Structure probing data (2A3) for a 207-nucleotide construct. Values cover nucleotides 27 to 156. Values are in units of 0.01, from 0 to 300, in steps of 10. The 2A3 profile rests on 882 reads. Conditions: 150 mM KOAc, 10 mM MgCl2 and 150 mM bicine (pH 8.5), 24 C.
[RMDB]
RNA sequence: GGGAACGACUCGAGUAGAGUCGAAAAUCACAUAAUUGAGACAGUUGCACCAGGCCUUGGGGGCUAGGAUAUCUGUUUUGUUCAACUCUAAAGAGGGAAAAGGGAUGAAUAGUGAAGUGUUUGUCAGUGUGGCUUUAAGUAAGGCAAAGAUAGGGCACACGUAGUCCACCUUCGGGUGGACUACGUGAAAAGAAACAACAACAACAAC
Reactivity to 2A3 in 0.01 (KOAc 150mM, MgCl2 10mM, bicine 150mM(pH8.5), 24C), signal-to-noise 2, nucleotides 027 to 156: u070c020a070c030a090u200a160a140u120u120g000a010g040a040c070a050g030u050u020g010c020a040c020c060a040g020g060c000c000u140u140g050g000g000g030g030c030u060a020g000g040a010u030a040u170c000u030g020u060u070u000u000g020u060u000c060a050a030c020u010c010u170a160a090a030g010a020g000g010g010a020a030a040a000g010g000g000a080u030g010a090a010u060a110g050u040g090a140a000g020u000g050u080u070u150g040u040c030a020g010u010g020u040g090g030c040u030u120u040a060a020g010u060a020a000g000g030c040a160a030a020g020a060u150a050g000g000g030c000a000